Structure probing data (DMS and 2A3) for a 177-nucleotide construct. 2A3 adducts were read by reverse transcription with SuperScript II with manganese. For DMS, 2,548 sequencing reads were counted. The 2A3 profile rests on 3,139 reads. Conditions: 150 mM KOAc, 10 mM MgCl2 and 150 mM bicine (pH 8.5), 24 C. Reactivities are given for positions 27 through 126. Source: RMDB library OK2TRN, as collected in RNAgym.
[RMDB]
RNA sequence: GGGAACGACUCGAGUAGAGUCGAAAAUACCGUGGCCUGAUCGCGCUCGUACUCGUAGCGGCCUCAGUACUGAGUACUGCGCGGUACGCGCGUGGUACUACGAUCGUACGUCGGCCACGGCGCGGCCGACCGCCAGGUCAUUCGUGACCUGGCGGUCAAAAGAAACAACAACAACAAC
Reactivity to DMS in 0.01 (KOAc 150mM, MgCl2 10mM, bicine 150mM(pH8.5), 24C), signal-to-noise 2, nucleotides 027 to 126: u010a100c000c010g040u000g000g020c000c000u000g010a030u010c040g010c010g000c040u000c050g020u010a010c050u000c020g020u000a060g000c010g000g010c300c000u010c020a020g020u010a050c120u010g040a080g010u000a090c000u000g000c100g000c090g010g000u000a010c010g000c100g000c000g000u000g000g000u000a040c140u000a110c060g000a090u030c130g010u000a040c100g030u000c080g000g000c000c000a020c000g000g010c050g000c100g000g000c090c050
Reactivity to 2A3 in 0.01 (KOAc 150mM, MgCl2 10mM, bicine 150mM(pH8.5), 24C), signal-to-noise 2, nucleotides 027 to 126: u130a020c000c000g000u000g010g020c020c060u120g060a050u110c050g010c000g010c030u010c020g000u010a020c040u050c140g000u040a080g000c000g000g010c000c000u020c000a030g040u100a170c170u150g090a010g060u040a170c020u020g040c050g010c020g020g000u070a060c000g000c000g000c010g030u050g030g000u010a060c040u020a030c000g170a150u160c100g050u090a060c050g000u010c040g000g010c000c000a000c000g000g000c010g020c030g050g070c060c040